[RMDB]
The record gives the reactivity of an RNA of 177 nucleotides to DMS and 2A3. The DMS profile rests on 2,693 reads. It was measured as part of the RMDB library OK1LIB.
RNA sequence: GGGAACGACUCGAGUAGAGUCGAAAACGCACCGCACCACAGCACGCAGAGGGCACACACCAGCAGCACACGGCCAGUCAUCAUCAUCGCCAUCACUCCUGUCACUUGCGUGCAGCCUUCAGCACAAGCAUCGUACCUAUUUCGAUAGGUACGAUGCAAAAGAAACAACAACAACAAC
Reactivity to DMS in 0.01 (KOAc 150mM, MgCl2 10mM, bicine 150mM(pH8.5), 24C), signal-to-noise 2, nucleotides 027 to 126: c060g010c020a030c040c050g010c030a080c000c020a020c050a050g060c040a000c020g020c050a050g000a210g020g000g000c110a090c090a060c040a030c070c030a050g000c040a080g000c010a090c070a050c010g070g000c010c060a030g040u000c030a020u010c050a100u020c070a050u010c030g000c010c030a060u000c030a090c080u000c060c010u000g000u020c030a020c080u000u050g000c050g050u020g020c050a130g000c010c020u020u000c090a090g010c120a020c070a120a120
Reactivity to 2A3 in 0.01 (KOAc 150mM, MgCl2 10mM, bicine 150mM(pH8.5), 24C), signal-to-noise 5, nucleotides 027 to 126: c030g020c010a020c030c010g020c000a010c010c010a020c020a020g020c030a030c040g020c010a020g030a050g120g020g020c020a010c000a000c000a020c040c010a010g050c010a010g020c010a010c000a010c030g040g010c030c000a030g060u030c010a030u010c000a020u030c000a030u060c050g020c040c000a030u030c010a020c030u000c010c000u040g040u060c020a020c080u040u110g010c010g030u030g010c020a010g000c000c000u030u090c030a020g010c020a030c010a120a020